[RMDB]
RNA sequence: GGGAACGACUCGAGUAGAGUCGAAAAGAGUAGUAGGAGUGUUGGAGAAGCCCGGUGCUCCUAUGAAAUCUGGAAAAUCCUGAGGCUGAAAGGUGAGAAGGUACAAGGAGGCUUCCAAGUAGGGUCUUGUUUAACCGAAUUUCGAUUCGGUUAAACAAAAAGAAACAACAACAACAAC
Reactivity to DMS in 0.01 (KOAc 150mM, MgCl2 10mM, bicine 150mM(pH8.5), 24C), signal-to-noise 3, nucleotides 027 to 126: g020a020g020u050a210g000u010a000g000g000a000g020u010g020u000u020g000g010a170g020a230a120g000c110c000c000g020g000u000g000c000u000c000c010u000a010u010g000a050a190a120u000c030u000g020g020a030a140a120a050u020c010c020u000g000a070g000g010c030u000g000a060a110a090g010g020u000g000a120g000a110a050g000g010u000a060c060a030a060g040g010a180g000g000c020u000u000c020c070a060a080g010u020a040g040g000g000u030c080u020
Reactivity to 2A3 in 0.01 (KOAc 150mM, MgCl2 10mM, bicine 150mM(pH8.5), 24C), signal-to-noise 3, nucleotides 027 to 126: g020a010g020u020a000g000u000a000g000g000a000g000u010g050u010u050g040g020a160g020a190a030g080c000c000c020g010g010u000g000c000u000c010c000u010a010u010g000a020a000a010u030c020u000g040g070a050a020a000a110u030c020c010u050g010a090g070g000c020u030g060a040a040a010g060g000u110g040a090g010a050a030g050g000u050a060c020a020a080g040g010a060g070g000c000u020u000c020c010a070a010g020u020a060g070g030g040u050c040u060
Conditions: 150 mM KOAc, 10 mM MgCl2 and 150 mM bicine (pH 8.5), 24 C. An RNA of 177 nucleotides, treated with DMS and 2A3 and read out base by base. Reactivities are rounded to 0.1 and cut off at 0 and 3. Values cover nucleotides 27 to 126. It was measured as part of the RMDB libraries RFM100 and RFMREP.